[RMDB]
RNA sequence: GGGAACGACUCGAGUAGAGUCGAAAAGCAUUUGGCUAUGCCAGAUGGACUGAAUCCAGAUCAAGUCGCACAGUGGCUGCAGACUGUCAAGGCUUUGUUUGAGAGUGCCAAAUAUUGGAAUCUGUCCGCACGAGGACAGGUUCGCCUGUCCUCGUGCAAAAGAAACAACAACAACAAC
Reactivity to 2A3 in 0.01 (KOAc 150mM, MgCl2 10mM, bicine 150mM(pH8.5), 24C), signal-to-noise 3, nucleotides 027 to 126: g060c010a040u060u030u030g040g000c050u250a060u300g020c000c000a040g020a090u040g000g010a000c030u050g090a010a030u050c000c010a050g000a070u150c060a040a030g030u030c010g020c040a000c030a010g020u050g130g000c080u100g010c040a020g060a090c030u000g000u000c060a120a250g030g000c010u060u040u050g100u030u130u060g140a210g000a000g050u110g050c010c030a050a110a040u300a100u060u060g030g020a110a030u000c010u010g010u070c030c040
Reactivity to DMS in 0.01 (KOAc 150mM, MgCl2 10mM, bicine 150mM(pH8.5), 24C), signal-to-noise 2, nucleotides 027 to 126: g020c010a020u000u040u000g000g000c020u060a130u020g000c000c010a010g020a030u000g020g000a100c090u000g000a080a120u000c000c070a020g000a060u010c100a030a030g040u000c000g050c050a100c050a060g010u040g030g000c050u040g000c010a020g010a020c060u000g000u040c080a090a070g000g000c060u000u000u000g010u000u000u000g000a120g050a130g050u010g000c000c050a090a100a090u100a150u000u000g000g000a070a040u020c020u010g000u010c150c090
Structure probing data (2A3 and DMS) for a 177-nucleotide construct. The reactions ran in a buffer of 150 mM KOAc, 10 mM MgCl2 and 150 mM bicine (pH 8.5), at 24 C. For 2A3, 994 sequencing reads were counted. 2A3 adducts were read by reverse transcription with SuperScript II with manganese. Values are in units of 0.01, from 0 to 300, in steps of 10. Reactivities are given for positions 27 through 126.